[RMDB]
Description
The record gives the reactivity of an RNA of 177 nucleotides to 2A3 and DMS. The data come from the RNA Mapping Database (RMDB), library OK1LIB. For 2A3 the reverse transcriptase was SuperScript II with manganese. The 2A3 profile rests on 1,633 reads.
RNA sequence: GGGAACGACUCGAGUAGAGUCGAAAAGCCACUGACUACGGUCAGUGGCAAUAAAUCACACUAAACCGCCAAAAGAGAAAAUCUCAAGUGUGAAAAGGCGGAACAGGCUAGGUACGCCUAGCCUGAAACUAGCAUCAGGGUUCGCCCUGAUGCUAGUAAAAGAAACAACAACAACAAC
Reactivity to 2A3 in 0.01 (KOAc 150mM, MgCl2 10mM, bicine 150mM(pH8.5), 24C), signal-to-noise 3, nucleotides 027 to 126: g000c000c010a000c000u000g000a000c000u010a000c190g100g000u000c000a000g010u010g000g020c000a000a000u000a000a000a010u100c020a000c000a000c020u140a130a090a240c000c000g060c000c030a040a020a090a000g050a030g030a080a130a230a300u050c020u030c000a100a070g020u020g020u000g070a160a120a010a000g020g000c000g000g000a040a060c000a000g000g010c000u000a000g000g030u060a080c220g040c070c000u000a000g000c000c000u000g000a010a000
Reactivity to DMS in 0.01 (KOAc 150mM, MgCl2 10mM, bicine 150mM(pH8.5), 24C), signal-to-noise 2, nucleotides 027 to 126: g010c030c000a020c000u000g000a010c000u000a090c220g050g010u000c020a000g020u000g000g000c030a050a010u010a040a110a070u010c020a020c020a010c000u030a080a110a010c010c000g000c000c000a140a130a090a100g000a000g050a080a060a100a120u020c010u000c000a030a090g020u000g020u010g000a090a060a040a140g000g000c030g020g000a230a280c000a010g020g010c000u000a000g000g000u070a060c220g040c000c020u000a000g000c000c000u030g000a080a070